[RMDB]
Source: RMDB library TTRINS, as collected in RNAgym. The record gives the reactivity of an RNA of 177 nucleotides to DMS. The DMS profile rests on 1,228 reads. The RNA was probed in 150 mM KOAc, 10 mM MgCl2 and 150 mM bicine (pH 8.5) at 24 C. DMS adducts were read by reverse transcription with MarathonRT.

RNA sequence: GGGAACGACUCGAGUAGAGUCGAAAAGAUAUGGAUCGCCAAACCUCGCUUGGACCUCCAUGGUCGUAACAUCGGAUCGGAAACGAUCCGUGGACCAUGGAGCUAGCGAAACAGCGAUCCUAAGUCACAUUCGAAGACAGUUCGCUGUCUUCGAAUGAAAAGAAACAACAACAACAAC
Reactivity to DMS in 0.01 (KOAc 150mM, MgCl2 10mM, bicine 150mM(pH8.5), 24C), signal-to-noise 2, nucleotides 027 to 126: g000a100u000a300u000g000g020a000u010c000g000c000c040a040a200a220c300c150u000c000g040c020u000u020g020g000a150c300c000u000c000c000a000u000g000g000u000c000g000u010a050a210c100a030u000c020g000g010a010u010c000g000g000a120a100a240c000g010a000u000c000c010g080u020g020g000a010c000c000a020u000g000g000a010g010c010u000a010g010c030g000a000a030a070c230a160g000c000g010a000u000c000c000u000a020a080g010u000c050a280